[RMDB]
RNA sequence: GGGAACGACUCGAGUAGAGUCGAAAAUACGACGUAUUCGUACGUCGUAAAGGUACGAAAGUACAAAGGAGCAAAAGCUUGAGCUCCUAAAAAUCAUGCAAAACACGAGCCGAUUCGUCGGCUCGAAUAGCCUUGUAUUGUUCGCAAUACAAGGCUAAAAAGAAACAACAACAACAAC
Reactivity to DMS in 0.01 (KOAc 150mM, MgCl2 10mM, bicine 150mM(pH8.5), 24C), signal-to-noise 1, nucleotides 027 to 126: u000a040c000g000a000c010g030u000a030u020u010c200g030u000a010c010g000u000c000g040u000a000a060a060g010g020u000a000c000g010a090a150a260g010u010a010c000a090a140a090g000g000a000g000c000a060a070a050a160g010c060u010u000g010a040g000c000u000c000c000u010a000a040a010a040a010u000c030a080u000g010c060a040a040a060a060c250a220c000g000a000g020c040c010g010a010u000u040c110g000u000c010g000g010c000u000c000g000a000a050
Reactivity to 2A3 in 0.01 (KOAc 150mM, MgCl2 10mM, bicine 150mM(pH8.5), 24C), signal-to-noise 1, nucleotides 027 to 126: u040a010c000g000a000c000g010u010a030u020u040c130g030u030a010c000g030u000c000g010u000a000a030a000g090g000u000a000c030g040a150a020a010g000u000a000c040a000a130a050g010g020a000g020c040a010a000a280a120g000c040u020u040g020a010g050c000u010c040c030u030a010a020a000a000a000u110c030a020u130g080c080a000a000a120a090c080a090c000g000a000g000c000c000g000a010u030u000c210g070u010c050g030g000c010u000c000g000a000a000